[RMDB]
RNA sequence: GGGAACGACUCGAGUAGAGUCGAAAAGAACUCACCAGCAAAUGUUUACGACAAGAUUCGAGAUUUGCAAAUUACGUAGCGAUCUUCCAGAAUCUUGUCGAAACGUUCCCAAUCGCUACGCCCUAAAAUUAAGACUAUGAUUCGUCAUAGUCUUAAUAAAAGAAACAACAACAACAAC
Reactivity to DMS in 0.01 (KOAc 150mM, MgCl2 10mM, bicine 150mM(pH8.5), 24C), signal-to-noise 9, nucleotides 027 to 126: g000a090a100c060u010c050a090c070c040a090g010c100a080a090a050u010g020u000u000u000a210c020g010a010c000a010a010g000a010u000u000c000g010a080g000a070u000u000u010g030c090a070a090a120u010u010a090c180g020u010a110g010c000g000a010u000c070u000u000c160c170a120g010a010a000u000c000u000u000g000u000c000g000a000a020a070c040g010u000u000c010c000c000a120a060u000c050g010c030u000a030c050g010c020c010c020u000a030a050a060
Reactivity to 2A3 in 0.01 (KOAc 150mM, MgCl2 10mM, bicine 150mM(pH8.5), 24C), signal-to-noise 5, nucleotides 027 to 126: g030a050a030c020u030c060a070c030c010a020g050c060a040a060a120u170g030u090u140u110a110c000g000a000c010a010a000g000a010u010u000c030g010a000g020a140u110u190u300g130c030a050a070a100u200u110a090c140g040u090a040g000c000g010a010u020c040u180u070c160c090a020g000a000a010u000c000u000u000g000u000c000g000a010a000a000c000g000u010u010c000c000c000a010a030u050c000g000c000u040a010c020g020c000c000c010u100a120a110a010